[RMDB]
RNA sequence: GGGAACGACUCGAGUAGAGUCGAAAAGAUAUGGACUCGUAACACGCAACAGCUAUGACCUCGGAAACGAGGUAUAGACAUGCGUGGAGAAGAGUCCUAAGUCAAAACUAUCGGUUCGCCGAUAGAAGUUCAGUUAACAGUUCGCUGUUAACUGAACAAAAGAAACAACAACAACAAC
Reactivity to 2A3 in 0.01 (KOAc 150mM, MgCl2 10mM, bicine 150mM(pH8.5), 24C), signal-to-noise 4, nucleotides 027 to 126: g020a010u060a050u160g000g010a010c000u010c020g010u040a090a000c010a000c010g040c000a070a120c050a300g060c030u020a020u180g300a210c000c000u000c000g050g000a100a100a060c000g010a000g000g000u000a000u000a000g010a010c040a060u140g000c000g000u010g000g000a010g020a020a010g000a000g000u000c000c000u000a000a010g010u010c030a020a010a150a210c010u010a010u010c010g000g070u060u040c300g040c110c010g000a000u000a010g020a040a020
Reactivity to DMS in 0.01 (KOAc 150mM, MgCl2 10mM, bicine 150mM(pH8.5), 24C), signal-to-noise 4, nucleotides 027 to 126: g000a040u000a300u010g000g010a010c000u010c000g000u000a140a300c000a010c010g010c000a030a070c300a230g030c000u000a000u000g010a010c000c000u000c000g010g010a080a080a190c000g000a010g000g000u000a010u000a000g000a030c100a230u000g000c000g030u000g000g000a080g020a080a180g000a010g000u000c000c000u000a030a100g010u000c050a090a110a090a190c010u000a000u010c000g000g000u000u010c300g030c010c000g000a010u000a010g000a060a110
The record gives the reactivity of an RNA of 177 nucleotides to 2A3 and DMS. For 2A3, 10,028 sequencing reads were counted. The data come from the RNA Mapping Database (RMDB), library TTRDES. Reactivities are given for positions 27 through 126.